[RMDB]
RNA sequence: GGGAACGACUCGAGUAGAGUCGAAAACUCAAUCACUACGGUGAUUGAGAAUGCUUACGCCUCAAUUAAGCUUGAGUUGAGUGCCUCAAGCAGAUAUAGACUGAAACAUUUAGUAUGGUCAAGCAGGGAGCAACAGCUCGAGUACGCUCGAGCUGAAAAAUUUAUGAGGAUUCGUCCUCAUAAAUUUAAAAGAAACAACAACAACAAC
Reactivity to DMS in 0.01 (KOAc 150mM, MgCl2 10mM, bicine 150mM(pH8.5), 24C), signal-to-noise 2, nucleotides 027 to 156: c010u000c000a010a020u010c000a020c010u000a100c280g090g000u010g010a020u010u020g000a000g000a020a050u000g040c040u010u010a110c140g070c020c000u020c030a070a080u000u000a070a160g000c040u000u010g000a080g030u000u020g030a110g000u000g050c160c060u000c080a020a040g020c000a070g000a100u010a160u000a110g020a070c050u010g020a160a110a090c030a120u000u000u010a080g020u000a070u000g000g010u000c050a050a080g010c040a090g020g000g010a100g010c030a090a180c000a040g050c000u000c020g000a060g010u000a090c300g010c010u000c000g000a000g020c010u010g010a010a030
Reactivity to 2A3 in 0.01 (KOAc 150mM, MgCl2 10mM, bicine 150mM(pH8.5), 24C), signal-to-noise 4, nucleotides 027 to 156: c000u000c000a000a000u000c000a000c010u050a020c250g110g000u000g000a000u000u000g000a000g000a020a070u050g010c000u040u050a050c060g050c020c000u050c050a060a110u110u090a090a030g010c010u010u030g010a000g020u040u070g060a050g060u090g060c000c000u020c030a010a000g000c010a000g030a010u160a020u020a040g080a030c030u080g050a070a150a020c040a060u130u190u110a050g030u040a060u140g030g010u040c010a020a020g000c040a020g080g030g010a040g010c030a020a080c010a010g000c000u000c000g010a010g020u020a030c190g050c070u010c010g020a010g000c010u010g030a020a000